[RMDB]
RNA sequence: GGGAACGACUCGAGUAGAGUCGAAAAACGGUGAGGUGCUGGUCGGCCAGCCCGCCAAGAACCAGGCGGUGACCAACGUCGAUCGCACCGUGCGCUCGGUCAAGCGACACAUGGGCAGCGACUGGUCCCAAAUGAGGUGAUUCGUCACCUCAUUUGGAAAAGAAACAACAACAACAAC
Reactivity to DMS in 0.01 (KOAc 150mM, MgCl2 10mM, bicine 150mM(pH8.5), 24C), signal-to-noise 9, nucleotides 027 to 126: a090c080g010g020u000g020a110g010g030u010g020c020u040g020g020u010c050g020g010c000c080a090g000c030c010c000g010c010c010a110a090g010a120a110c150c170a090g000g010c010g000g000u010g000a090c050c060a080a150c300g000u000c010g010a020u000c030g010c030a030c000c010g010u020g010c060g000c060u000c020g000g000u010c100a120a100g000c060g010a070c040a060c080a100u020g000g000g010c030a080g000c020g000a040c040u000g010g000u000c050
Reactivity to 2A3 in 0.01 (KOAc 150mM, MgCl2 10mM, bicine 150mM(pH8.5), 24C), signal-to-noise 9, nucleotides 027 to 126: a000c050g010g020u070g060a100g010g010u100g030c100u150g040g030u090c040g050g070c010c000a010g010c000c000c010g000c000c000a050a050g120a050a060c060c030a020g010g000c000g010g080u070g040a200c020c030a060a060c060g010u020c020g010a070u020c010g010c020a010c020c000g000u010g010c030g010c020u030c020g030g030u060c060a090a050g050c040g080a030c020a000c010a130u120g030g020g010c030a030g020c020g040a030c020u020g030g010u050c010

Chemical mapping of a 177-nucleotide RNA with DMS and 2A3. Reactivities are given for positions 27 through 126. For 2A3 the reverse transcriptase was SuperScript II with manganese. Conditions: 150 mM KOAc, 10 mM MgCl2 and 150 mM bicine (pH 8.5), 24 C. DMS adducts were read by reverse transcription with MarathonRT.